[RMDB]
RNA sequence: GGGAACGACUCGAGUAGAGUCGAAAAAUGCCGUGGAGAACUGCACUGAAAGUGGCUCUUGCCGCUGGAGAAGCAGUCGCAAAAGCGCUCACAAGAGCCGUAAGAGAUGAGAUCAAACAAACCCAAAGCUGCAAAAUUAUUUCGAUAAUUUUGCAGCAAAAGAAACAACAACAACAAC
Reactivity to DMS in 0.01 (KOAc 150mM, MgCl2 10mM, bicine 150mM(pH8.5), 24C), signal-to-noise 2, nucleotides 027 to 126: a110u010g020c010c050g010u000g020g020a140g030a140a020c000u000g000c040a150c080u000g020a240a080a070g030u000g020g000c010u000c200u010u030g000c060c020g000c030u000g000g030a230g030a070a050g040c020a010g020u000c090g020c060a010a050a100a140g000c050g000c080u000c040a080c110a090a100g000a030g020c020c020g030u010a050a080g000a190g010a030u010g000a110g010a300u000c040a030a080a030c070a030a090a120c010c010c010a080a040a120
Reactivity to 2A3 in 0.01 (KOAc 150mM, MgCl2 10mM, bicine 150mM(pH8.5), 24C), signal-to-noise 1, nucleotides 027 to 126: a000u060g000c040c080g100u290g100g060a160g000a130a070c000u000g000c020a040c040u020g020a040a070a050g040u040g000g000c000u070c080u120u240g010c020c000g000c000u010g000g090a120g000a180a030g000c020a040g040u040c020g000c000a040a100a000a000g070c020g000c050u000c000a110c000a100a190g000a000g000c000c050g100u170a090a020g080a040g020a050u130g030a000g020a020u060c080a040a120a170c060a120a060a050c000c020c000a020a080a000